An RNA of 177 nucleotides, treated with DMS and 2A3 and read out base by base.

RNA sequence: GGGAACGACUCGAGUAGAGUCGAAAAAAGAAUAUUCCGAAAGAUCGUUGCUACGGUAACCUUCUGUCAGGAAUACCCGAAUCAUGAGAACUCUGUUUCGAAAGGAUUUGCGGUAGAGCACAUAGAAGAACCUCUUGUCGUUCGCGACAAGAGGUUCAAAAGAAACAACAACAACAAC
Reactivity to DMS in 0.01 (KOAc 150mM, MgCl2 10mM, bicine 150mM(pH8.5), 24C), signal-to-noise 1, nucleotides 027 to 126: a030a030g000a210a120u000a070u000u000c000c010g030a160a060a010g000a000u000c210g000u000u000g000c010u000a150c140g000g030u000a000a030c000c000u040u000c000u000g000u000c290a300g000g040a000a000u000a030c010c040c000g010a000a090u030c040a000u000g000a300g010a030a080c030u010c150u030g030u000u000u000c000g000a070a120a140g060g000a010u000u000u000g000c170g020g000u020a080g000a050g000c130a000c230a040u000a050g000a090a070
Reactivity to 2A3 in 0.01 (KOAc 150mM, MgCl2 10mM, bicine 150mM(pH8.5), 24C), signal-to-noise 1, nucleotides 027 to 126: a000a000g130a140a000u130a060u020u000c000c020g010a000a010a010g030a000u010c000g000u010u010g000c010u010a130c280g040g000u020a060a030c000c000u000u000c000u010g210u080c070a020g000g000a010a010u000a000c000c000c000g050a000a000u000c010a030u020g010a000g000a000a000c020u050c020u300g090u060u000u000c000g070a010a000a000g040g000a030u040u010u070g090c120g070g040u190a040g000a050g060c050a030c040a080u170a070g080a180a030
As a SHAPE reagent, 2A3 marks flexible, mostly unpaired nucleotides at the ribose 2'-OH.
For DMS the reverse transcriptase was MarathonRT.
For 2A3, 559 sequencing reads were counted.
The data come from the RNA Mapping Database (RMDB), library RFM100.